[RMDB]
RNA sequence: GGGAACGACUCGAGUAGAGUCGAAAAUCAGUGUUUCGACACUGAGAGUAACCUUUGUGAUCCAGACAGCGAUAAGAAUAUAGGGUCCCAUUGGGACCUCAUAUUCUUUUGACGCUGUAUGGAUCACUCUGGUAUCAGUACGAGAUUCGUCUCGUAACCCCUGCAGUAACUUCGGUUACUGCAGGGGAAAAGAAACAACAACAACAAC
Reactivity to 2A3 in 0.01 (KOAc 150mM, MgCl2 10mM, bicine 150mM(pH8.5), 24C), signal-to-noise 2, nucleotides 027 to 156: u040c010a000g000u000g040u060u140u220c190g020a000c000a010c000u010g010a010g000a000g090u080a030a060c020c000u050u000u030g000u000g000a000u010c000c000a000g010a000c000a010g010c020g040a050u000a110a000g000a010a000u030a000u030a060g000g000g020u000c060c000c070a300u300u300g020g020g000a000c000c000u020c010a000u000a000u000u030c000u000u000u010u050g060a010c020g000c000u000g000u010a000u000g000g000a000u000c000a000c000u000c000u000g000g010u020a050u170c040a020g150u020a000c010g000a000g000a030u050u100c200g150u020c120u040c010g010u040a070a080